[RMDB]
RNA sequence: GGGAACGACUCGAGUAGAGUCGAAAAUGCAAGUAGUGCUAUUGUUGGAAUCACCGUACCUAUUUAGGUUUACGCUUCAAGAUCGGUGGAUAGCAGCCCUAUCAAUAUCUAGGAGAACUGUGCUAUGAAAACGGUAUUGGCUUCGGCCAAUACCGAACGAAUGAGUCGUGUUCGCACGACUCAUUCGAAAAGAAACAACAACAACAAC
Reactivity to 2A3 in 0.01 (KOAc 150mM, MgCl2 10mM, bicine 150mM(pH8.5), 24C), signal-to-noise 1, nucleotides 027 to 156: u180g000c040a000a130g020u140a030g000u040g120c010u050a010u040u000g090u030u010g000g120a090a090u050c000a010c060c000g030u030a000c000c000u040a150u230u120u190a010g000g000u000u140u140a070c030g020c010u050u040c020a050a040g000a150u070c030g010g010u040g000g020a020u040a000g030c000a030g010c000c000c010u040a050u050c070a150a090u040a020u080c010u000a010g040g010a070g070a080a080c000u010g020u090g080c030u090a070u170g060a000a130a000a000c000g000g040u000a000u000u000g000g000c000u030u000c080g020g040c000c010a000a000u000a000c000c000g000a000a000